Structure probing data (2A3) for a 207-nucleotide construct. For 2A3 the reverse transcriptase was SuperScript II with manganese. The reactions ran in a buffer of 150 mM KOAc, 10 mM MgCl2 and 150 mM bicine (pH 8.5), at 24 C.
RNA sequence: GGGAACGACUCGAGUAGAGUCGAAAAGAACUUUGGCCGGCUCGGAAUAGAAUCAGGGGGUGCAAACUGCCCACUGGCAGAAAGGAUUAUAGCAAAUGCGCACCCUAUUGCAAUACAGCCCGGCCAACAUAGACUACUCUAUUCGUAGAGUAGUCAACUGAGGGAUACUGUUCGCAGUAUCCCUCAGAAAAGAAACAACAACAACAAC
Reactivity to 2A3 in 0.01 (KOAc 150mM, MgCl2 10mM, bicine 150mM(pH8.5), 24C), signal-to-noise 1, nucleotides 027 to 156: g040a120a000c000u020u010u010g000g000c000c010g010g070c000u010c030g010g090a170a070u150a130g040a040a060u110c100a050g000g000g000g000g000u030g010c020a000a000a020c000u020g000c020c040c010a120c160u150g030g000c010a000g090a020a040a030g170g040a050u170u120a100u260a170g020c050a070a000a110u070g020c000g000c000a040c010c000c000u000a010u000u050g100c000a050a060u090a200c000a010g010c020c080c020g000g000c000c000a000a000c000a000u000a020g010a000c000u000a000c000u000c000u010a060u040u100c110g090u040a000g000a000g000u000a000g020u000c000a000a000